[RMDB]
RNA sequence: GGGAACGACUCGAGUAGAGUCGAAAAGAGGAGUCAUUCGUGACUCCUCAAAGGGAGCUCAACUCUCCCGCUCAACUCCGAGAGCCUUCGGACCCAAAAGAAUGCUGUUCCUGUUCGCAGGAACAAACACAGUGUUGAGUUUCGACUCAACACUGUGAAAAGAAACAACAACAACAAC
Reactivity to 2A3 in 0.01 (KOAc 150mM, MgCl2 10mM, bicine 150mM(pH8.5), 24C), signal-to-noise 3, nucleotides 027 to 126: g000a010g010g000a010g000u020c010a000u110u130c170g120u090g000a010c000u000c000c000u020c000a000a010a000g000g010g010a000g000c030u040c190a040a060c050u010c000u010c100c010c000g000c010u000c000a020a020c010u080c110c070g030a050g020a070g220c030c050u030u020c010g020g010a020c000c000c000a050a070a020a010g140a080a060u180g050c030u020g070u000u020c010c000u000g030u000u050c220g000c060a000g000g010a020a000c000a010a010a000
Reactivity to DMS in 0.01 (KOAc 150mM, MgCl2 10mM, bicine 150mM(pH8.5), 24C), signal-to-noise 2, nucleotides 027 to 126: g000a030g030g000a020g020u000c000a040u000u030c160g010u050g000a000c010u000c000c010u000c010a000a020a020g020g010g010a000g000c270u000c230a090a110c300u000c000u000c000c000c000g030c040u010c010a000a020c040u010c020c080g000a110g000a120g040c120c180u030u000c020g000g000a280c000c000c010a060a060a150a090g050a160a060u000g000c140u000g020u000u000c000c000u000g000u010u000c110g000c000a040g010g000a000a000c000a010a070a160
Chemical mapping of a 177-nucleotide RNA with 2A3 and DMS.
Conditions: 150 mM KOAc, 10 mM MgCl2 and 150 mM bicine (pH 8.5), 24 C.